Source: RMDB library RNAMAK, as collected in RNAgym.
Structure probing data (DMS and 2A3) for a 207-nucleotide construct.
For 2A3, 2,870 sequencing reads were counted.

[RMDB]
RNA sequence: GGGAACGACUCGAGUAGAGUCGAAAAGGGGUCUCUCGAAGUCGCUGUGAGAGGCUUGGAUUUAUAUGGCUGAAGCCUCCACGGCCAUAUUGUCAGCCUCCACAGCGUCACGAGAGACGGAGGCACCCAAACUGCUUGGUCUUCGGACCAAGCAGAAUCUACCCUAUUGGUUCGCCAAUAGGGUAGAAAAAGAAACAACAACAACAAC
Reactivity to DMS in 0.01 (KOAc 150mM, MgCl2 10mM, bicine 150mM(pH8.5), 24C), signal-to-noise 1, nucleotides 027 to 156: g050g010g040g030u010c000u000c010u000c000g070a120a240g040u000c020g040c000u010g010u010g010a110g020a010g010g020c010u000u000g030g020a090u000u000u000a030u000a030u010g020g000c010u010g000a080a110g000c040c010u010c010c070a300c040g010g000c000c000a010u010a000u010u020g020u000c020a170g010c000c010u000c020c010a080c000a020g000c000g030u040c020a220c030g000a010g000a050g000a010c030g000g010a080g050g060c010a190c020c000c060a100a090a250c000u000g010c010u000u010g000g000u030c010u000u000c300g040g030a020c010c000a000a010g020c000a000g030a050a140
Reactivity to 2A3 in 0.01 (KOAc 150mM, MgCl2 10mM, bicine 150mM(pH8.5), 24C), signal-to-noise 3, nucleotides 027 to 156: g150g000g020g000u010c010u010c000u000c000g060a210a060g050u030c000g000c000u000g020u040g030a300g010a040g240g000c070u080u170g090g000a010u040u300u060a010u050a000u000g000g000c010u000g040a130a010g040c010c030u020c030c000a030c020g000g000c000c000a000u000a000u000u030g020u020c040a030g020c000c000u000c000c000a000c000a000g000c000g000u000c000a000c000g020a000g010a000g000a000c010g000g010a000g020g000c020a050c000c010c020a040a090a070c010u000g000c000u010u000g000g000u020c020u060u080c270g080g000a010c000c000a000a010g000c000a000g000a000a000